Source: RMDB libraries RFM100 and RFMREP, as collected in RNAgym.
Chemical mapping of a 177-nucleotide RNA with DMS and 2A3.
Values are in units of 0.01, from 0 to 300, in steps of 10.
The reactions ran in a buffer of 150 mM KOAc, 10 mM MgCl2 and 150 mM bicine (pH 8.5), at 24 C.
For 2A3 the reverse transcriptase was SuperScript II with manganese.

RNA sequence: GGGAACGACUCGAGUAGAGUCGAAAAUGCGGCAUUUUCCACAAGUGUGGUUUCCCUGGCCAAUCCACUUGUAAUGUGUAUUUUGUAAAUAACGCAAAAUGUGCAUUAGAAGUGGAUUGGUCAAGAGAUGGCUCUAAUUCUUCGGAAUUAGAGCCAUAAAAGAAACAACAACAACAAC
Reactivity to DMS in 0.01 (KOAc 150mM, MgCl2 10mM, bicine 150mM(pH8.5), 24C), signal-to-noise 2, nucleotides 027 to 126: u020g020c150g020g050c030a080u010u000u000u020c020c000a000c100a300a150g000u050g000u020g010g010u010u000u010c000c060c000u010g040g000c000c000a000a020u000c000c000a000c000u000u000g000u030a010a000u000g000u000g030u000a010u020u000u030u000g000u000a050a120a160u030a140a100c210g000c000a000a010a000a010u000g000u010g000c000a010u000u010a020g000a010a020g000u000g000g000a020u000u000g000g010u000c000a000a040g000a080g030
Reactivity to 2A3 in 0.01 (KOAc 150mM, MgCl2 10mM, bicine 150mM(pH8.5), 24C), signal-to-noise 7, nucleotides 027 to 126: u130g010c130g130g020c070a000u000u000u010u020c010c000a010c020a130a250g170u180g000u010g270g010u010u020u020c000c000c020u010g000g000c000c000a000a000u000c000c000a020c010u060u030g240u110a000a000u000g000u000g000u000a000u000u000u000u000g010u010a070a200a300u190a210a130c170g000c000a000a000a010a000u000g010u010g010c010a000u000u010a000g020a020a000g000u010g000g000a000u000u000g000g000u000c000a000a000g010a000g000